RNA sequence: GGGAACGACUCGAGUAGAGUCGAAAACGGACUCAUUAAGACGCGAUGAAUACGUCCCUGUUCUUUGUACACACCGCCCGUCGUUAUCGAAGAUGGAGUCAGGCGCGAACAAGCGAGAGCGAGUGAGACUAUGGCAACAGUUCGCUGUUGCCAUAGUAAAAGAAACAACAACAACAAC
Reactivity to 2A3 in 0.01 (KOAc 150mM, MgCl2 10mM, bicine 150mM(pH8.5), 24C), signal-to-noise 8, nucleotides 027 to 126: c020g010g010a010c010u010c020a040u100u080a090a010g100a040c020g020c030g050a050u080g030a060a050u120a090c030g050u030c000c000c010u010g080u050u020c010u030u050u070g090u080a040c070a000c010a010c050c020g040c030c020c000g070u030c020g040u060u080a100u140c060g040a060a040g040a080u110g060g030a050g050u040c020a030g050g000c000g000c010g050a060a040c040a100a020g030c030g020a070g010a000g050c020g010a060g050u070g020a060g040
Reactivity to DMS in 0.01 (KOAc 150mM, MgCl2 10mM, bicine 150mM(pH8.5), 24C), signal-to-noise 7, nucleotides 027 to 126: c080g010g000a070c070u010c020a040u010u020a130a080g010a070c100g010c060g000a040u000g010a090a060u010a080c060g010u020c030c020c000u000g010u010u000c030u000u000u010g010u000a120c110a100c080a070c060c020g020c020c010c010g010u010c030g010u000u020a090u000c100g000a070a090g010a100u010g010g000a080g000u000c040a040g000g000c070g010c030g020a050a040c100a060a120g000c040g010a070g000a090g000c020g010a130g010u000g010a110g010

This 177-nucleotide RNA was probed chemically with 2A3 and DMS. High 2A3 reactivity points to a flexible backbone, as in loops and unpaired stretches.